An RNA of 177 nucleotides, treated with 2A3 and DMS and read out base by base.
The reactions ran in a buffer of 150 mM KOAc, 10 mM MgCl2 and 150 mM bicine (pH 8.5), at 24 C.
Source: RMDB library OK1LIB, as collected in RNAgym.

[RMDB]
RNA sequence: GGGAACGACUCGAGUAGAGUCGAAAACGUCGCGCUCAAGCCGGAACGCUGACUGGCCGACAUCCCACAUCAGUUGCGCGCCAACCGACACCGCCAACUGAUGGCUUGGCACCAGCCCCUCGUGAACAAUACGAUCCGCAUUCGUGCGGAUCGUAUUAAAAGAAACAACAACAACAAC
Reactivity to 2A3 in 0.01 (KOAc 150mM, MgCl2 10mM, bicine 150mM(pH8.5), 24C), signal-to-noise 2, nucleotides 027 to 126: c030g010u020c000g020c000g000c080u110c140a040a060g050c010c030g110g020a030a050c130g040c080u040g080a070c010u010g060g000c010c010g050a040c030a040u000c000c020c000a040c020a000u000c030a010g020u040u000g020c040g000c000g030c160c060a130a130c120c020g110a040c010a020c010c010g000c000c000a000a000c030u000g000a000u000g000g000c040u040u100g030g000c030a000c010c040a040g030c010c030c000c060u030c000g050u040g040a050a000c020
Reactivity to DMS in 0.01 (KOAc 150mM, MgCl2 10mM, bicine 150mM(pH8.5), 24C), signal-to-noise 2, nucleotides 027 to 126: c200g010u000c010g000c110g050c040u020c220a070a070g030c010c080g000g130a120a160c230g020c000u020g010a130c200u000g000g020c090c000g060a030c040a170u000c000c000c000a260c000a060u010c040a000g000u000u000g000c160g090c000g060c120c120a050a110c130c060g000a060c130a130c190c010g000c030c010a020a030c040u000g000a010u000g010g000c050u040u010g010g000c010a070c060c000a110g040c000c000c000c000u000c070g000u000g000a120a150c150
DMS adducts were read by reverse transcription with MarathonRT.